Description
An RNA of 177 nucleotides, treated with 2A3 and DMS and read out base by base.
RNA sequence: GGGAACGACUCGAGUAGAGUCGAAAAUAUACAUCAGAAGUCGGCACAACUCCCGACUCGCGGUGAGCGAUGCAGCGUAGCGCGAGCUACGCAGCUGCUGUGCGGAUGGCUAGCGUGCGCUAGCCUAACUAGUAUCCAUCUUCGGAUGGAUACUAGUAAAAGAAACAACAACAACAAC
Reactivity to 2A3 in 0.01 (KOAc 150mM, MgCl2 10mM, bicine 150mM(pH8.5), 24C), signal-to-noise 9, nucleotides 027 to 126: u180a000u030a040c040a030u050c020a030g080a190a020g100u020c010g020g090c150a050c030a300a300c100u050c010c000c000g010a020c020u000c000g010c040g000g050u100g050a020g000c040g130a120u160g010c030a010g000c000g010u020a000g000c010g030c060g040a030g000c000u000a000c000g000c000a000g000c010u050g000c010u020g070u120g050c040g090g030a070u110g010g000c000u000a000g000c040g180u300g120c170g000c040u000a000g000c000c000u000a010
Reactivity to DMS in 0.01 (KOAc 150mM, MgCl2 10mM, bicine 150mM(pH8.5), 24C), signal-to-noise 8, nucleotides 027 to 126: u030a100u030a160c050a050u000c030a090g000a110a050g010u000c000g000g000c180a130c110a070a150c240u020c100c000c000g000a040c040u010c020g000c300g010g010u020g000a090g010c040g010a070u020g010c010a040g020c000g010u000a000g010c010g010c300g010a160g000c000u000a000c000g020c010a010g020c010u010g000c050u000g010u010g020c050g010g010a070u010g000g000c000u000a010g000c010g000u050g010c190g000c000u000a010g000c000c000u010a010